[RMDB]
RNA sequence: GGGAACGACUCGAGUAGAGUCGAAAAGAUAUGGAAGGAGACAUGCUCAGGAGGGUAUCAUCCCAUACGAUCGGAAACGAUCGUAUGGGAUGCCGAGCCCUACUGAGCAACAGCUCCUUCCUAAGUCGUUAUUGGUUUUGUUCGCAAAACCAAUAACAAAAGAAACAACAACAACAAC
Reactivity to DMS in 0.01 (KOAc 150mM, MgCl2 10mM, bicine 150mM(pH8.5), 24C), signal-to-noise 2, nucleotides 027 to 126: g010a030u010a300u000g000g010a010a000g000g000a010g020a040c060a300u000g000c000u010c010a010g000g000a070g010g010g020u010a100u000c010a010u000c010c000c000a000u000a000c000g000a000u010c020g000g000a140a150a170c010g020a020u020c000g030u000a010u000g000g010g010a000u000g000c300c160g000a210g010c000c000c000u000a040c000u010g000a020g030c000a000a000c240a110g000c020u000c000c000u000u000c000c010u000a030a080g000u010c150